Structure probing data (DMS) for a 177-nucleotide construct. The RNA was probed in 150 mM KOAc, 10 mM MgCl2 and 150 mM bicine (pH 8.5) at 24 C. Values cover nucleotides 27 to 126.

RNA sequence: GGGAACGACUCGAGUAGAGUCGAAAAUUUGGCUCCAAGACACUCCCAAGCAUCAGCUUUGGGGGUUUAUCUGGGUUCAAACCCCCCUUGUGGAGGAAGUGUUACAAUGUAGAUCAUUAAGGAGAGCCUAGAUGCUAUCCUUCGGGAUAGCAUCUAGAAAAGAAACAACAACAACAAC
Reactivity to DMS in 0.01 (KOAc 150mM, MgCl2 10mM, bicine 150mM(pH8.5), 24C), signal-to-noise 1, nucleotides 027 to 126: u000u000u000g000g000c000u000c000c030a070a040g020a130c130a000c000u000c010c010c010a060a090g000c010a210u020c270a120g010c040u000u000u010g020g000g000g020g000u000u010u000a040u030c050u000g000g000g000u000u000c080a000a030a080c000c000c000c000c000c040u000u000g020u000g000g000a150g060g010a110a060g000u010g020u000u000a080c080a050a030u000g000u000a120g000a080u000c010a020u010u000a090a070g000g000a070g000a080g010c230